[RMDB]
RNA sequence: GGGAACGACUCGAGUAGAGUCGAAAACACUGCACAUACUAAGUAAUCGUAGCUGAGUUCGAUGACCGUACCUGCUCCCAUGGAGUCAUCUCGUUUGAUGGUACUGCCUUCAUCGUCAUCGUAGAUGACCGAGAGCGUACUUCGGUACGCUCUCGGUAAAAGAAACAACAACAACAAC
Reactivity to DMS in 0.01 (KOAc 150mM, MgCl2 10mM, bicine 150mM(pH8.5), 24C), signal-to-noise 2, nucleotides 027 to 126: c070a080c090u010g010c030a040c090a100u000a060c070u010a100a100g010u000a070a090u000c070g020u010a070g000c080u000g010a080g020u000u000c050g010a070u010g000a070c090c080g010u000a040c050c070u000g010c080u010c000c020c060a120u000g000g010a140g020u000c030a020u010c010u000c050g010u010u000u000g010a010u000g040g000u000a070c140u010g000c060c040u000u010c060a020u000c040g000u000c010a020u000c020g000u000a040g000a050u010g000
Reactivity to 2A3 in 0.01 (KOAc 150mM, MgCl2 10mM, bicine 150mM(pH8.5), 24C), signal-to-noise 2, nucleotides 027 to 126: c020a010c040u120g040c030a020c030a140u180a050c030u150a030a230g070u080a130a090u090c120g050u030a030g000c020u030g060a030g110u090u080c060g040a060u120g090a070c020c060g050u050a050c010c030u040g080c020u000c020c020c000a070u170g070g000a050g050u000c020a010u000c010u000c020g090u020u080u060g030a030u030g040g000u020a060c050u110g090c000c050u020u110c020a030u010c020g000u020c000a010u040c030g070u070a030g060a120u050g050